[RMDB]
RNA sequence: GGGAACGACUCGAGUAGAGUCGAAAAUCUUGUUCGAUUUCGCUGACGACCUGCAACACGAUCCGGCCACUGUCGCGCGCGCCGACGCGAUCAAAGAGGAGCUAAUGGCGCGCGAUGAGAUCGCCACUGACGUUGGAAUAUUCGUAUUCCAACGUCAAAAAGAAACAACAACAACAAC
Reactivity to 2A3 in 0.01 (KOAc 150mM, MgCl2 10mM, bicine 150mM(pH8.5), 24C), signal-to-noise 6, nucleotides 027 to 126: u070c040u060u140g060u090u060c050g060a150u040u030u070c040g010c050u070g040a070c030g060a110c010c030u020g010c030a080a020c020a050c120g050a020u030c030c000g010g000c030c010a060c070u080g010u040c030g000c010g000c000g000c010g000c020c000g010a040c050g000c010g050a080u120c080a070a170a080g100a100g100g040a040g000c000u030a110a060u170g010g000c000g000c000g000c000g000a010u030g010a000g010a050u060c050g020c070c020a080c060
Reactivity to DMS in 0.01 (KOAc 150mM, MgCl2 10mM, bicine 150mM(pH8.5), 24C), signal-to-noise 4, nucleotides 027 to 126: u020c060u020u000g020u010u000c020g000a110u010u010u010c060g000c040u000g010a060c100g000a100c030c000u000g020c050a030a080c110a080c120g000a060u000c060c020g000g000c040c030a040c070u000g010u010c000g000c000g010c020g000c010g030c000c000g000a240c280g000c010g000a110u010c090a070a100a140g020a170g010g010a300g000c010u000a070a110u040g010g010c000g010c010g000c010g030a010u050g000a080g020a090u020c070g000c050c060a100c160